[RMDB]
RNA sequence: GGGAACGACUCGAGUAGAGUCGAAAAUUGAACGGAUUCGUCCGUUCAACGCGUGCGAUCCAAACGUUGUACAAAAGUACAGACGAAAGCACAAGGAUCAAAUGAUACAGCCGUUCGCGGCUGUAAACUAUGCAGAAACAUUCGUGUUUCUGCAUAGAAAAGAAACAACAACAACAAC
Reactivity to 2A3 in 0.01 (KOAc 150mM, MgCl2 10mM, bicine 150mM(pH8.5), 24C), signal-to-noise 6, nucleotides 027 to 126: u020u010g000a010a000c000g000g010a010u050u070c170g050u010c050c000g000u000u000c000a000a010c030g040c050g020u040g010c060g000a020u010c000c000a010a070a010c020g010u010u020g000u020a010c020a020a300a100a100g000u010a010c010a060g200a050c030g080a210a080a040g050c030a040c050a100a080g030g000a030u050c020a020a060a060u160g050a040u020a050c000a000g000c010c000g010u050u080c230g000c010g100g000c000u000g000u000a010a000a000
Reactivity to DMS in 0.01 (KOAc 150mM, MgCl2 10mM, bicine 150mM(pH8.5), 24C), signal-to-noise 6, nucleotides 027 to 126: u000u000g000a010a010c010g010g010a030u000u010c230g010u000c000c000g010u000u000c000a010a020c160g000c190g020u000g010c080g010a050u010c030c020a060a090a260c030g010u000u000g000u000a000c000a100a070a090a170g020u000a000c010a010g020a040c020g000a070a050a140g010c030a040c090a130a150g000g000a050u010c050a110a100a110u010g000a200u010a020c000a010g000c000c010g010u000u010c190g030c020g000g010c000u000g010u000a000a070a170